The record gives the reactivity of an RNA of 207 nucleotides to 2A3.
[RMDB]
RNA sequence: GGGAACGACUCGAGUAGAGUCGAAAAAGGUGUGGAGCGACCUUAAACAGUUCUGGUGGUGCUCUGAAUGGAGUGCUCUACUGAGAUUAUAAAAUAGAAGGUAAGCUAUUAUCUCUGACAACAGGGCGAAGCACUCGGGGGUUCGCCCCCGAGUGAAUCUAACGCAACAGUUCGCUGUUGCGUUAGAAAAAGAAACAACAACAACAAC
Reactivity to 2A3 in 0.01 (KOAc 150mM, MgCl2 10mM, bicine 150mM(pH8.5), 24C), signal-to-noise 1, nucleotides 027 to 156: a020g000g000u000g010u030g000g000a000g000c000g000a000c000c010u050u060a000a120a020c010a030g000u010u010c030u050g020g070u010g010g060u040g000c020u050c000u080g120a090a180u270g020g000a000g020u020g020c020u000c040u070a090c000u070g010a010g000a150u060u120a080u240a140a100a090a030u150a050g030a140a020g070g060u090a030a070g000c010u010a010u120u010a030u100c000u000c000u000g070a030c050a110a010c010a040g000g000g040c020g020a050a020g070c000a000c000u000c030g000g000g000g000g000u050u030c140g070c000c000c000c000c000g000a000g000u000g000a000a030

The reactions ran in a buffer of 150 mM KOAc, 10 mM MgCl2 and 150 mM bicine (pH 8.5), at 24 C. Source: RMDB library M2RFPK, as collected in RNAgym. 2A3 adducts were read by reverse transcription with SuperScript II with manganese.